[RMDB]
RNA sequence: GGGAACGACUCGAGUAGAGUCGAAAAGGGGUUCGUAUUUCGGCCCCAAGUCCGGCCCCCGCGAGAGCGUCAGCGGGUACUACUCGCACCGCGAGGAUCUGCGCCGCUGGCAGGCGCGCAUGAUCGCGAGACGGAUUAAAUUCGUUUAAUCCGUCUCAAAAGAAACAACAACAACAAC
Reactivity to 2A3 in 0.01 (KOAc 150mM, MgCl2 10mM, bicine 150mM(pH8.5), 24C), signal-to-noise 5, nucleotides 027 to 126: g100g030g010g010u300u300c030g010u160a300u150u270u210c010g010g010c010c000c000c000a000a020g060u000c030c000g080g110c020c010c000c010c010g000c000g020a050g000a020g020c030g020u060c010a000g000c020g010g020g000u020a050c010u020a010c000u000c010g010c030a290c150c120g010c010g000a010g010g050a030u020c020u030g020c120g120c040c040g000c010u010g040g000c030a050g080g020c010g000c000g000c000a030u190g060a100u120c040g010c040
Reactivity to DMS in 0.01 (KOAc 150mM, MgCl2 10mM, bicine 150mM(pH8.5), 24C), signal-to-noise 6, nucleotides 027 to 126: g010g000g000g020u000u020c020g040u000a220u000u010u010c010g010g010c000c010c000c010a030a030g000u010c040c020g010g000c030c020c000c030c060g020c020g000a050g000a160g000c040g000u000c030a050g010c010g000g010g000u000a040c110u000a180c010u000c000g010c030a170c190c180g000c010g010a070g000g000a080u000c140u000g000c030g010c050c050g020c010u000g000g010c140a060g000g000c000g000c010g000c040a100u010g010a090u000c060g020c250
Overview: An RNA of 177 nucleotides, treated with 2A3 and DMS and read out base by base. DMS (dimethyl sulfate) methylates the pairing face of unpaired adenines and cytosines. For 2A3 the reverse transcriptase was SuperScript II with manganese. The RNA was probed in 150 mM KOAc, 10 mM MgCl2 and 150 mM bicine (pH 8.5) at 24 C. The data come from the RNA Mapping Database (RMDB), library OK2TRN. The 2A3 profile rests on 6,659 reads.